[RMDB]
RNA sequence: GGGAACGACUCGAGUAGAGUCGAAAAAACCAUUCAGUCCUCCUAUGCCUUCUUUCUCCAACUGUGUGGUCUUUCUUCUGAAACAAAGAAGAAAUAGCCAAAUCAGAAUUGCCCUCUUGGAAUUGUGAUUAUCCGGUGUGUUCGCACACCGGAUAAUAAAAGAAACAACAACAACAAC
Reactivity to 2A3 in 0.01 (KOAc 150mM, MgCl2 10mM, bicine 150mM(pH8.5), 24C), signal-to-noise 2, nucleotides 027 to 126: a000a000c040c000a020u150u100c040a030g060u010c000c030u020c000c020u000a050u190g010c000c000u040u060c030u010u020u040c050u040c030c010a110a120c020u010g010u010g050u060g040g020u000c000u020u010u000c000u010u000c000u010g040a060a040a080c060a080a170a030g020a000a000g020a000a000a020u050a020g010c010c010a000a040a090u110c020a000g040a060a090u030u040g100c000c040c000u110c050u000u020g050g040a060a060u110u080g070u030g050
Reactivity to DMS in 0.01 (KOAc 150mM, MgCl2 10mM, bicine 150mM(pH8.5), 24C), signal-to-noise 2, nucleotides 027 to 126: a120a050c040c000a110u020u000c070a150g000u000c000c010u000c020c050u030a080u020g000c030c020u000u000c000u000u010u000c020u010c030c030a110a120c040u000g030u020g020u040g030g000u010c140u000u000u000c000u000u000c040u010g030a100a110a090c260a110a120a080g000a030a020g000a000a020a010u020a150g000c000c010a000a170a080u020c030a020g000a100a070u000u020g010c020c020c020u000c030u000u000g010g010a090a090u010u040g000u020g000
Structure probing data (2A3 and DMS) for a 177-nucleotide construct. For 2A3 the reverse transcriptase was SuperScript II with manganese. It was measured as part of the RMDB libraries RFM100 and RFMREP. The RNA was probed in 150 mM KOAc, 10 mM MgCl2 and 150 mM bicine (pH 8.5) at 24 C. For 2A3, 1,038 sequencing reads were counted.